[RMDB]
RNA sequence: GGGAACGACUCGAGUAGAGUCGAAAAGCAGCUUUGCCCUAUGAGAAUAGGGCAAACGUUCUAUUCAUCACUGAGAAAGCCUUCAGUGAGGGUAUGAAGGCUUGAUCGUACCUCGUAGGGUAAGGUAGAUACGACAGUGAUUCGUUACUGUUGUAUCAAAAGAAACAACAACAACAAC
Reactivity to 2A3 in 0.01 (KOAc 150mM, MgCl2 10mM, bicine 150mM(pH8.5), 24C), signal-to-noise 9, nucleotides 027 to 126: g090c070a010g010c040u010u000u000g000c000c000c000u000a000u010g100a070g030a080a030u000a010g000g000g000c000a000a010a000c020g010u020u010c030u050a080u040u090c060a100u040c030a060c040u070g000a000g020a030a040a020g030c010c000u010u010c010a030g020u030g120a100g030g030g010u100a050u080g000a020a010g040g000c000u030u040g020a030u020c010g010u030a060c000c010u040c030g060u090a070g030g030g040u040a030a010g050g030u040a050
Reactivity to DMS in 0.01 (KOAc 150mM, MgCl2 10mM, bicine 150mM(pH8.5), 24C), signal-to-noise 9, nucleotides 027 to 126: g010c120a140g000c070u000u000u000g000c000c000c000u000a000u000g000a120g000a120a020u000a010g000g000g010c000a000a010a020c110g010u010u000c010u000a040u010u010c080a120u010c070a030c040u020g010a020g010a140a040a080g010c050c010u000u000c000a020g000u010g010a050g000g010g010u010a050u010g000a020a060g010g010c050u000u010g000a120u010c020g020u000a060c130c120u000c060g020u000a030g000g000g010u000a040a020g000g010u010a100

Conditions: 150 mM KOAc, 10 mM MgCl2 and 150 mM bicine (pH 8.5), 24 C. An RNA of 177 nucleotides, treated with 2A3 and DMS and read out base by base. For 2A3 the reverse transcriptase was SuperScript II with manganese. For DMS the reverse transcriptase was MarathonRT.